[RMDB]
RNA sequence: GGGAACGACUCGAGUAGAGUCGAAAAUGCAAGUAGUGCUAUUGUUGGAAUCACCGUACCUAUUUAGGUUUACGCUCCAAGAUCGGUGGAUAGCAGCACUAUCAAUAUCUAGGAGAACUGUGCUAUGAAAACGGUAUUGGCUUCGGCCAAUACCGAACUUUUCCUCAAACUUCGGUUUGAGGAAAAGAAAAGAAACAACAACAACAAC
Reactivity to DMS in 0.01 (KOAc 150mM, MgCl2 10mM, bicine 150mM(pH8.5), 24C), signal-to-noise 2, nucleotides 027 to 156: u040g010c050a170a130g040u010a090g030u000g040c000u000a060u000u020g010u070u010g000g000a130a030u020c000a140c070c010g060u000a050c010c010u000a250u000u010u010a040g010g020u000u010u000a050c050g010c010u000c010c040a030a040g000a080u020c040g060g040u000g020g010a100u040a110g040c030a100g050c010a300c000u000a080u000c070a060a140u020a130u020c040u000a110g000g010a060g000a050a070c040u020g040u020g010c020u000a060u010g060a050a070a110a160c010g020g020u000a020u000u000g020g010c020u000u020c300g030g020c000c000a000a000u000a010c020c010g000a000a020
Reactivity to 2A3 in 0.01 (KOAc 150mM, MgCl2 10mM, bicine 150mM(pH8.5), 24C), signal-to-noise 2, nucleotides 027 to 156: u080g030c020a050a040g020u030a010g010u070g040c050u060a080u150u150g090u050u110g080g070a100a050u080c030a020c060c000g010u050a040c020c040u080a120u170u120u240a030g030g010u010u040u030a040c020g000c030u000c010c010a040a000g020a070u110c070g000g060u030g040g020a030u060a030g050c040a000g020c000a040c010u030a010u070c020a030a060u060a010u180c020u060a010g000g000a030g000a040a040c020u040g040u080g100c020u100a060u190g140a070a110a040a020c000g000g000u000a000u000u000g010g000c000u020u000c110g020g020c000c030a000a000u000a000c000c000g000a000a000